[RMDB]
RNA sequence: GGGAACGACUCGAGUAGAGUCGAAAAUAGGGCCGAUUUCUAUCUCAAAUAUUCAGCUGCUGAUUUUGGGAAUUUCGAUUUUCCUCAUGGUGGCUCUGCAGUUUAUCGUGCAGAAGACAAAGAUGGGAUUACUGGCAGUGUUCGCACUGCCAGUAAUAAAAGAAACAACAACAACAAC
Reactivity to DMS in 0.01 (KOAc 150mM, MgCl2 10mM, bicine 150mM(pH8.5), 24C), signal-to-noise 2, nucleotides 027 to 126: u000a090g020g010g000c020c000g000a100u000u000u050c030u000a040u000c010u010c020a040a030a030u050a050u030u030c110a040g020c040u010g030c010u000g000a060u020u010u000u030g060g000g000a090a170u020u010u080c080g000a080u000u000u030u000c000c000u010c060a010u000g000g040u000g000g000c100u020c000u000g000c010a020g010u050u030u060a080u060c280g000u010g000c000a000g030a090a040g000a100c060a050a080a070g000a070u010g020g000g020
Reactivity to 2A3 in 0.01 (KOAc 150mM, MgCl2 10mM, bicine 150mM(pH8.5), 24C), signal-to-noise 3, nucleotides 027 to 126: u270a060g050g000g000c000c010g020a020u060u070u000c050u110a070u000c000u000c030a060a080a030u260a110u230u050c070a020g040c040u100g010c010u050g110a140u130u060u040u070g000g000g000a040a020u000u090u110c090g050a100u020u000u070u070c000c020u090c040a090u110g050g000u020g060g000c000u000c000u020g000c000a000g000u060u180u170a210u150c130g050u060g000c000a000g020a140a050g060a080c030a060a150a000g080a040u090g060g040g020